Structure probing data (DMS and 2A3) for a 177-nucleotide construct.
RNA sequence: GGGAACGACUCGAGUAGAGUCGAAAACUGAGGUCGUACAAUGCGGUGUCAUUGGGGCUAGAAUUAUGACGCUGGGUACGACCAAGGGUAUGUUUGAGUAUUCUAGCCCCAAUUCAGGCAUACUCUAGGUAGACGGUGAUUUCGAUCAUCGUCUACCAAAAGAAACAACAACAACAAC
Reactivity to DMS in 0.01 (KOAc 150mM, MgCl2 10mM, bicine 150mM(pH8.5), 24C), signal-to-noise 2, nucleotides 027 to 126: c000u000g000a160g000g000u000c020g020u000a000c020a120a110u060g020c020g000g000u010g000u000c000a150u040u030g000g000g010g040c000u000a000g020a090a050u030u030a080u020g010a010c000g030c020u000g000g000g000u010a010c000g000a000c000c000a010a020g010g000g000u010a000u000g000u000u000u000g000a030g010u040a080u000u000c030u000a020g020c000c000c000c000a000a010u010u020c000a010g010g010c010a010u000a000c000u000c010u000a070
Reactivity to 2A3 in 0.01 (KOAc 150mM, MgCl2 10mM, bicine 150mM(pH8.5), 24C), signal-to-noise 4, nucleotides 027 to 126: c040u080g060a070g070g010u000c000g000u000a010c030a130a240u300g100c050g030g000u030g020u040c050a110u090u250g000g000g000g000c000u000a000g030a060a080u300u230a100u300g020a010c000g000c020u040g050g030g010u000a000c000g010a000c000c000a010a000g000g000g000u010a020u020g000u000u020u010g030a070g040u150a110u100u040c000u000a000g000c000c010c000c000a000a000u030u010c000a000g000g000c010a000u000a010c000u010c010u000a030
For DMS, 7,319 sequencing reads were counted. Values are in units of 0.01, from 0 to 300, in steps of 10.